The data come from the RNA Mapping Database (RMDB), library OK2TST.
The record gives the reactivity of an RNA of 177 nucleotides to DMS.
DMS adducts were read by reverse transcription with MarathonRT.
The reactions ran in a buffer of 150 mM KOAc, 10 mM MgCl2 and 150 mM bicine (pH 8.5), at 24 C.
For DMS, 1,020 sequencing reads were counted.
RNA sequence: GGGAACGACUCGAGUAGAGUCGAAAAUGGCCCGAGGCAGGCUGCGCAGCCGCUUGAGUCGGCGAUGGGAGACGAACAGCGGCACACCGGCGUGUCCGAGCCACGAGGUGAUGUGGGUACCGAGGUACCCUAGGCGGACCUUCGGGUCCGCCUAGGGAAAAGAAACAACAACAACAAC
Reactivity to DMS in 0.01 (KOAc 150mM, MgCl2 10mM, bicine 150mM(pH8.5), 24C), signal-to-noise 2, nucleotides 027 to 126: u000g000g000c000c000c000g000a190g000g040c000a020g010g000c020u010g000c060g060c300a300g020c000c000g040c000u000u000g000a230g000u000c040g010g010c080g030a120u010g010g030g000a290g000a030c000g010a020a160c170a000g020c000g010g070c020a050c090a090c300c000g030g000c010g000u000g000u000c020c010g000a080g030c040c010a080c040g020a180g000g000u010g040a040u000g000u000g010g000g010u020a020c010c070g000a140g010g000u000a070